[RMDB]
RNA sequence: GGGAACGACUCGAGUAGAGUCGAAAACAGGAAUCGAACCUACCUCUUUCUAGCUUAUGAGACUAGCGAUCUCUACCAGAGAUCUAACCCGCAAUUGUUUGGUCAGGGUAUAGAGAUUCGAACUCUAGUAUUGACACUGAUUCGUCAGUGUCAAUACAAAAGAAACAACAACAACAAC
Reactivity to 2A3 in 0.01 (KOAc 150mM, MgCl2 10mM, bicine 150mM(pH8.5), 24C), signal-to-noise 4, nucleotides 027 to 126: c030a000g080g030a080a100u120c050g020a050a080c010c000u040a040c020c020u050c040u040u100u050c060u040a040g000c030u230u100a100u300g150a100g040a180c030u040a000g030c000g030a030u020c000u000c000u010a120c020c060a020g010a010g000a140u010c000u010a020a020c000c020c000g040c050a020a150u210u140g120u180u080u110g070g040u060c110a130g020g020g010u030a050u050a050g020a000g000a020u040u090c040g020a080a080c030u010c020u050a030
Reactivity to DMS in 0.01 (KOAc 150mM, MgCl2 10mM, bicine 150mM(pH8.5), 24C), signal-to-noise 4, nucleotides 027 to 126: c130a110g000g000a100a050u000c050g010a060a130c080c050u010a120c090c030u000c050u000u000u010c010u010a050g000c060u000u000a100u010g010a100g010a090c060u000a040g010c190g010a030u010c010u000c010u000a060c100c080a200g010a040g010a040u010c010u010a060a090c030c030c040g000c100a060a100u010u000g010u010u000u000g000g000u010c040a110g020g000g000u010a080u010a030g010a070g000a150u000u000c040g010a050a160c070u000c020u000a180